[RMDB]
RNA sequence: GGGAACGACUCGAGUAGAGUCGAAAAUUAAGGAGCGAUUAGACAAUCUGCUGCUGGCACCCAACGGCCAAAGACGAUAAACUGCCAGAGGUACGUUUUUAACCCCUAAGCCGUCGAGGAUAAAAUGCAUUAUGACCUGCUUCGGCAGGUCAUAAUGAAAAGAAACAACAACAACAAC
Reactivity to 2A3 in 0.01 (KOAc 150mM, MgCl2 10mM, bicine 150mM(pH8.5), 24C), signal-to-noise 3, nucleotides 027 to 126: u150u050a040a040g040g000a040g000c030g070a050u040u060a110g050a120c130a050a040u000c040u080g000c000u030g040c030u030g060g000c010a060c000c000c000a020a010c040g000g030c020c030a130a060a030g030a010c080g010a010u050a120a100a030c050u020g040c000c000a010g000a040g050g020u080a060c100g020u030u040u000u010u040a080a060c020c000c000c010u060a060a000g010c000c020g040u050c030g010a080g000g060a040u120a110a060a030a010u160g020
Reactivity to DMS in 0.01 (KOAc 150mM, MgCl2 10mM, bicine 150mM(pH8.5), 24C), signal-to-noise 2, nucleotides 027 to 126: u020u030a080a080g010g010a030g010c010g000a000u000u010a110g030a140c130a060a070u010c020u010g000c000u010g000c040u010g000g070c040a040c030c000c040a110a030c050g000g000c010c040a030a050a110g000a040c030g020a120u100a030a030a060c100u010g000c020c010a110g010a240g020g030u000a030c180g010u000u010u000u010u010a030a170c040c030c000c010u000a180a180g000c020c010g010u030c060g000a140g000g030a140u020a020a020a060a050u050g000
Annotation: Structure probing data (2A3 and DMS) for a 177-nucleotide construct. Source: RMDB library OK1LIB, as collected in RNAgym. The DMS profile rests on 2,705 reads. The RNA was probed in 150 mM KOAc, 10 mM MgCl2 and 150 mM bicine (pH 8.5) at 24 C. For 2A3, 1,846 sequencing reads were counted.